Source: RMDB library M2RFPK, as collected in RNAgym. Structure probing data (2A3) for a 207-nucleotide construct. For 2A3 the reverse transcriptase was SuperScript II with manganese. The reactions ran in a buffer of 150 mM KOAc, 10 mM MgCl2 and 150 mM bicine (pH 8.5), at 24 C.
RNA sequence: GGGAACGACUCGAGUAGAGUCGAAAAGUAGUUAUGCUGAAAAUCGUUGAGGUUGUAUGGAAUAGGUUAACCGUAAGACCUUAAGUUGAAAAACUUUAAAAUUAAUCUCAGGUAAAUUAUUUUGAGUAAAACCUUCGUCGUUUCGACGACGAAGGAAGUAUUAGAGCAUCUUCGGAUGCUCUAAUACAAAAGAAACAACAACAACAAC
Reactivity to 2A3 in 0.01 (KOAc 150mM, MgCl2 10mM, bicine 150mM(pH8.5), 24C), signal-to-noise 2, nucleotides 027 to 156: g080u100a040g010u110u160a090u200g090c020u070g100a050a020a050a150u130c030g000u050u040g050a010g050g020u020u040g050u070a180u160g040g030a130a150u060a120g000g010u060u080a090a080c000c010g050u060a000a100g060a030c000c000u080u000a030a030g000u000u000g060a110a130a000a000a000c050u070u090u110a030a200a090a150u090u060a040a060u020c010u000c010a020g020g000u040a270a010a000u070u040a090u100u170u090u120g020a000g000u130a000a040a040a030c000c000u000u000c000g000u000c000g020u000u060u060c190g080a010c000g000a000c000g000a000a000g000g000a000a030